This 177-nucleotide RNA was probed chemically with 2A3 and DMS.
RNA sequence: GGGAACGACUCGAGUAGAGUCGAAAAGCUAGUCGUGGCGCCGGCGGGCAGCCAAAGGAGUUCGACUGGAAAUGUGGUUGUCACCACCACCUCCUCGGGUAGUCACUCCUCGAAUGGGGCUAACGGAUCAUAGCAUAGGCUUCGGCCUAUGCUAUGAAAAAGAAACAACAACAACAAC
Reactivity to 2A3 in 0.01 (KOAc 150mM, MgCl2 10mM, bicine 150mM(pH8.5), 24C), signal-to-noise 1, nucleotides 027 to 126: g030c010u000a000g070u020c000g090u080g060g000c020g030c020c000g000g010c050g050g030g020c100a120g140c000c020a040a030a010g020g010a030g000u050u020c020g010a020c010u040g020g070a090a070a090u120g010u040g030g000u040u130g160u170c070a040c080c000a000c000c000a000c020c000u040c020c000u060c060g090g020g010u000a000g020u040c000a000c100u040c030c010u000c010g060a150a080u130g000g080g000g000c000u020a050a020c080g020g020a020
Reactivity to DMS in 0.01 (KOAc 150mM, MgCl2 10mM, bicine 150mM(pH8.5), 24C), signal-to-noise 3, nucleotides 027 to 126: g030c020u000a040g000u000c050g030u020g000g010c040g000c030c030g000g000c300g000g040g010c130a100g010c030c030a050a300a080g000g000a050g020u000u000c070g010a020c020u010g000g000a040a050a110u030g030u000g000g000u000u000g000u010c100a150c090c040a200c000c060a030c030c090u000c020c030u000c070g010g010g030u000a040g010u010c100a110c070u000c010c020u020c080g010a050a070u020g000g010g000g000c150u000a040a090c080g000g010a200

Reactivities are given for positions 27 through 126. For 2A3, 1,455 sequencing reads were counted.